[RMDB]
RNA sequence: GGGAACGACUCGAGUAGAGUCGAAAAGAAUGCCCAUUCGUGGGCAUUCCACCGCAGCGAAGCCCAAAGGCAUUUUAUGCGUACGCUGGCGAAAGCCUAAAAAAGCUCCACUUUUCGAAGUGGAGAAUAAUGCUAUGUAAUUCGUUACAUAGCAUUAAAAAGAAACAACAACAACAAC
Reactivity to DMS in 0.01 (KOAc 150mM, MgCl2 10mM, bicine 150mM(pH8.5), 24C), signal-to-noise 9, nucleotides 027 to 126: g000a010a000u000g000c000c000c000a050u000u010c190g030u000g010g000g010c000a010u000u000c000c070a140c120c020g010c050a050g010c080g000a100a120g010c020c030c090a060a100a110g010g010c020a040u000u010u000u010a070u010g000c030g010u010a080c130g010c090u000g010g020c010g010a090a070a140g010c020c030u000a000a030a060a060a090a110g010c000u000c000c000a010c000u000u000u000u020c140g010a010a010g010u000g000g000a010g000a030a030
Reactivity to 2A3 in 0.01 (KOAc 150mM, MgCl2 10mM, bicine 150mM(pH8.5), 24C), signal-to-noise 7, nucleotides 027 to 126: g000a000a000u000g000c000c000c020a000u020u070c220g060u030g000g000g000c000a000u000u000c000c010a040c010c030g020c030a010g020c010g050a070a020g010c000c020c050a120a080a020g100g010c020a050u070u080u070u200a100u120g020c010g020u050a040c050g020c090u030g020g010c000g020a080a020a010g010c020c030u140a110a100a020a020a020a020g030c000u000c000c000a010c010u030u040u070u100c160g040a020a000g000u010g000g010a000g000a000a000